Source: RMDB library M2PK90, as collected in RNAgym.
Structure probing data (DMS and 2A3) for a 177-nucleotide construct.
For 2A3, 3,300 sequencing reads were counted.
For 2A3 the reverse transcriptase was SuperScript II with manganese.
The DMS profile rests on 3,105 reads.
Conditions: 150 mM KOAc, 10 mM MgCl2 and 150 mM bicine (pH 8.5), 24 C.
RNA sequence: GGGAACGACUCGAGUAGAGUCGAAAAGCAGCAGUGAAUUAAAAUAAACAUGAAGAUCAAGAACAAGAUACAAACGGCAAGUAUCGUUCGAUCCAUGAGCGGAAUAAUAUCACAAAGAAGAAGAAAACUUUAAAUGUUGAUUCGUCAACAUUUAAAGAAAAGAAACAACAACAACAAC
Reactivity to DMS in 0.01 (KOAc 150mM, MgCl2 10mM, bicine 150mM(pH8.5), 24C), signal-to-noise 4, nucleotides 027 to 126: g000c070a030g010c040a100g020u010g000a040a080u000u000a050a060a120a120u000a080a150a110c040a030u000g000a090a100g000a020u000c050a100a090g000a030a020c030a090a100g010a030u000a030c020a040a060a100c120g000g000c140a070a080g010u000a010u000c020g000u000u000c020g000a030u000c010c020a010u000g000a060g000c120g000g000a040a060u000a050a030u000a080u020c050a040c070a030a070a080g010a080a070g000a050a100g020a070a070a060a110
Reactivity to 2A3 in 0.01 (KOAc 150mM, MgCl2 10mM, bicine 150mM(pH8.5), 24C), signal-to-noise 3, nucleotides 027 to 126: g040c040a000g020c010a000g020u020g030a040a040u090u100a010a110a030a110u180a050a090a020c010a000u020g070a060a060g010a010u030c060a050a060g020a030a000c040a090a130g000a010u040a020c020a030a220a010c060g150g000c090a100a060g000u030a010u020c000g000u020u020c010g000a010u020c000c000a010u010g030a030g040c050g000g090a010a010u080a030a020u080a050u030c030a010c040a070a090a010g120a070a000g020a080a010g040a020a180a010a010